[RMDB]
An RNA of 177 nucleotides, treated with 2A3 and DMS and read out base by base. Values cover nucleotides 27 to 126. High DMS reactivity at an A or C suggests that its Watson-Crick edge is free. High 2A3 reactivity points to a flexible backbone, as in loops and unpaired stretches. It was measured as part of the RMDB library OK1LIB.
RNA sequence: GGGAACGACUCGAGUAGAGUCGAAAAUGCAGCGCACAUGCGAGACACAUCGACCACGGUUCGAAAGAAGGCCCGGUGGUCCGCGGGCAACAUCACCAGGUGCGCAAGCGCCCGGGCGUCCAGAGGGCAUUAAAUAUCCAUUCGUGGAUAUUUAAUGAAAAGAAACAACAACAACAAC
Reactivity to 2A3 in 0.01 (KOAc 150mM, MgCl2 10mM, bicine 150mM(pH8.5), 24C), signal-to-noise 9, nucleotides 027 to 126: u150g010c020a010g010c010g010c020a010c010a050u110g030c040g060a060g040a030c060a010c000a120u050c040g020a030c010c030a050c070g050g030u110u090c030g080a120a110a100g100a060a070g070g000c030c050c000g030g030u040g010g010u000c010c010g010c020g000g030g000c040a090a050c020a120u090c010a010c060c020a030g030g030u020g000c020g000c030a030a020g020c010g010c000c000c000g000g030g000c030g020u020c010c010a030g030a050g070g020g000
Reactivity to DMS in 0.01 (KOAc 150mM, MgCl2 10mM, bicine 150mM(pH8.5), 24C), signal-to-noise 9, nucleotides 027 to 126: u020g000c060a130g010c010g010c020a040c030a080u020g010c060g000a110g010a080c080a080c100a060u010c050g000a120c040c040a110c130g000g010u010u000c030g010a100a110a110g010a110a110g000g010c050c020c030g010g010u010g010g010u010c030c050g020c050g000g000g010c060a080a070c120a060u010c070a130c080c040a120g010g010u010g000c030g010c080a090a100g000c050g000c020c000c010g010g000g000c060g010u010c020c030a070g010a100g000g000g010